[RMDB]
RNA sequence: GGGAACGACUCGAGUAGAGUCGAAAAUAUGUUUAUGGAAAAAGCUGCGCCCGCCGCGCCCGCCGCACCCGCUUUAGAUACCACCUUGGUCUUAAACCGUCGCUGCAGACGCGCUAUCAGCGAUUCUUCCAUCUGCGGAAUGGUCGGAGGUCCUCCACAUAAAUGAUAGGUUCGCCUAUCAUUUAUGAAAAGAAACAACAACAACAAC
Reactivity to 2A3 in 0.01 (KOAc 150mM, MgCl2 10mM, bicine 150mM(pH8.5), 24C), signal-to-noise 3, nucleotides 027 to 156: u210a030u090g040u060u130u060a110u100g050g020a100a150a070a080a050g040c000u030g010c010g040c010c020c000g010c050c010g000c020g000c070c030c020g000c040c030g020c010a060c020c020c000g000c030u070u100u060a100g010a080u140a100c010c030a050c040c040u060u140g020g010u030c030u080u130a140a110a050c000c010g020u020c030g020c060u040g010c040a000g010a100c010g020c010g040c020u050a070u200c050a040g020c020g040a060u110u030c010u060u000c040c020a080u040c050u070g020c000g010g030a110a070u090g030g020u030c020g020g040a020g000g020u010c000c010u000c030c010a030
Reactivity to DMS in 0.01 (KOAc 150mM, MgCl2 10mM, bicine 150mM(pH8.5), 24C), signal-to-noise 2, nucleotides 027 to 156: u010a070u000g000u010u000u010a080u010g030g000a070a100a100a100a150g040c050u000g020c060g030c030c030c040g010c060c020g050c070g010c070c010c030g000c060c020g000c070a070c000c010c060g020c110u000u000u000a070g030a190u010a070c040c020a080c070c050u000u000g020g020u000c040u000u000a050a070a110c040c020g010u000c030g030c030u010g030c020a130g010a050c010g000c050g000c020u000a070u000c050a080g030c030g010a180u000u010c070u000u010c050c040a060u000c040u000g020c030g010g030a050a080u000g010g030u000c010g000g020a090g020g020u000c020c000u010c010c020a200